Overview: Source: RMDB library ARCHII, as collected in RNAgym. Structure probing data (2A3) for a 207-nucleotide construct. Conditions: 150 mM KOAc, 10 mM MgCl2 and 150 mM bicine (pH 8.5), 24 C. For 2A3, 2,251 sequencing reads were counted. Values cover nucleotides 27 to 156.
RNA sequence: GGGAACGACUCGAGUAGAGUCGAAAAAUACGCCUACGCUUUGGCAGCCUAAGCGUGCUGCCACGCACCUUUAGACCUUGCCUGUGGGUCUAAAGGUGUGUGACCUAACAGGCUUUGGGAGGCUUAAUCGGUGGGGUUAAGCCUCCCGAGAUUACAUCUACACCAACAAGUUCGCUUGUUGGUGUAGAAAAGAAACAACAACAACAAC
Reactivity to 2A3 in 0.01 (KOAc 150mM, MgCl2 10mM, bicine 150mM(pH8.5), 24C), signal-to-noise 2, nucleotides 027 to 156: a000u090a030c050g070c000c020u080a080c080g080c120u150u040u020g000g010c020a000g000c010c020u120a190a070g090c110g130u120g000c010u000g020c000c000a000c000g000c000a000c000c000u000u010u000a000g010a000c000c000u010u080g010c000c000u000g010u000g000g000g010u010c000u010a000a000a000g010g000u000g000u010g000u000g010a010c000c010u030a030a010c000a010g000g000c000u190u300u010g000g000g000a000g000g000c000u000u000a020a000u030c080g120g040u150g140g190g020g000u010u000a000a000g000c010c000u000c000c000c000g000a000g010a000u000u030a010c010a020u000